Notes: This 177-nucleotide RNA was probed chemically with DMS. Conditions: 150 mM KOAc, 10 mM MgCl2 and 150 mM bicine (pH 8.5), 24 C.
[RMDB]
RNA sequence: GGGAACGACUCGAGUAGAGUCGAAAAAAAAGAUAUGGAGUUAGGGAGCAUUACCCAGCGAAGAACAGCUUCGGAAACGAAGCUGGGAGCUGUGCGUAAUGCGAAGAACUAACUCCUAAGUCAAAAACAAUAGACCAACGUUCGCGUUGGUCUAUUGAAAAGAAACAACAACAACAAC
Reactivity to DMS in 0.01 (KOAc 150mM, MgCl2 10mM, bicine 150mM(pH8.5), 24C), signal-to-noise 1, nucleotides 027 to 126: a070a050a040a180g000a000u000a300u010g000g010a010g020u000u000a000g020g010g020a190g050c000a040u000u000a040c000c000c000a010g020c000g000a140a130g040a130a050c000a000g010c010u010u000c010g000g000a120a090a250c010g020a000a010g000c000u000g000g000g030a090g050c000u000g000u010g000c230g020u000a000a000u000g000c010g060a080a130g000a110a120c010u000a000a000c010u000c000c010u000a010a130g010u040c060a050a050a050a070a140
Overview:
It was measured as part of the RMDB library TTRDES.